[RMDB]
RNA sequence: GGGAACGACUCGAGUAGAGUCGAAAAACAAAUUAUCUAAGUCUAAGACCUUGUUUCAAACUAACAAGGGGGCAUGGAGGAAGACCAGACCUCCAUACUUAGACAAGCGCGAACCGGCCAAAAAAAAUACAUACUAUGGAUUCGUCCAUAGUAUGUAAAAAGAAACAACAACAACAAC
Reactivity to 2A3 in 0.01 (KOAc 150mM, MgCl2 10mM, bicine 150mM(pH8.5), 24C), signal-to-noise 3, nucleotides 027 to 126: a000c050a030a090a010u210u120a090u170c040u110a110a100g010u010c000u020a010a030g050a090c010c000u000u000g060u030u050u080c190a210a180a080c070u070a000a010c010a010a000g010g010g000g090g030c060a000u020g000g000a010g020g020a130a020g060a160c040c010a020g060a100c000c000u000c020c000a000u000a010c000u000u000a010g000a010c020a030a020g010c070g010c010g090a020a020c020c020g040g020c010c000a070a050a050a000a000a010a020a020
Reactivity to DMS in 0.01 (KOAc 150mM, MgCl2 10mM, bicine 150mM(pH8.5), 24C), signal-to-noise 2, nucleotides 027 to 126: a040c080a080a080a080u000u020a080u020c060u000a080a110g010u010c020u000a020a050g000a140c000c000u000u000g010u000u010u000c100a140a130a170c230u000a000a000c020a000a000g000g010g020g000g010c160a010u000g010g000a000g030g010a060a060g000a200c100c080a110g000a080c000c000u000c000c010a010u000a030c010u000u000a000g000a000c020a080a080g010c100g030c030g000a050a040c040c080g000g000c080c040a010a000a000a020a070a040a060a240